Annotation
Source: RMDB library OK2TRN, as collected in RNAgym. An RNA of 177 nucleotides, treated with 2A3 and DMS and read out base by base. The 2A3 profile rests on 960 reads. Reactivities are given for positions 27 through 126. Conditions: 150 mM KOAc, 10 mM MgCl2 and 150 mM bicine (pH 8.5), 24 C.
RNA sequence: GGGAACGACUCGAGUAGAGUCGAAAAGAUCGGGAACCUUGUUAGUGUGGCCCAGCCAUUUGGCCUGAGCCUGAAGGAGACUGGGUUUGAACAUGUAUCCUUUGAUGGCAUCCUGGGAUUAGGUUACAGCUCGCGUAAUAUUCGUAUUACGCGAGCUAAAAGAAACAACAACAACAAC
Reactivity to 2A3 in 0.01 (KOAc 150mM, MgCl2 10mM, bicine 150mM(pH8.5), 24C), signal-to-noise 1, nucleotides 027 to 126: g040a060u130c040g060g000g020a000a000c010c030u000u080g100u110u080a130g030u010g030u050g170g010c070c000c000a030g000c000c000a090u160u120u130g090g020c020c020u100g020a040g000c040c000u040g040a040a070g010g040a060g020a020c050u040g010g000g060u030u160u240g070a050a020c030a030u110g010u030a040u030c000c000u050u050u140g090a090u110g050g030c010a060u030c010c050u020g050g000g000a090u100u070a040g020g080u060u020a070c030
Reactivity to DMS in 0.01 (KOAc 150mM, MgCl2 10mM, bicine 150mM(pH8.5), 24C), signal-to-noise 2, nucleotides 027 to 126: g020a090u000c030g010g000g000a080a080c040c030u000u000g010u000u000a090g020u010g030u000g010g010c020c020c010a020g000c040c020a270u000u000u010g010g000c120c050u000g010a120g010c030c000u010g030a050a070g000g010a060g010a040c010u000g020g000g010u000u010u020g030a080a060c050a030u020g000u000a090u000c010c010u000u000u020g010a100u000g010g000c070a150u000c040c040u010g000g020g010a090u010u010a030g000g010u000u020a020c130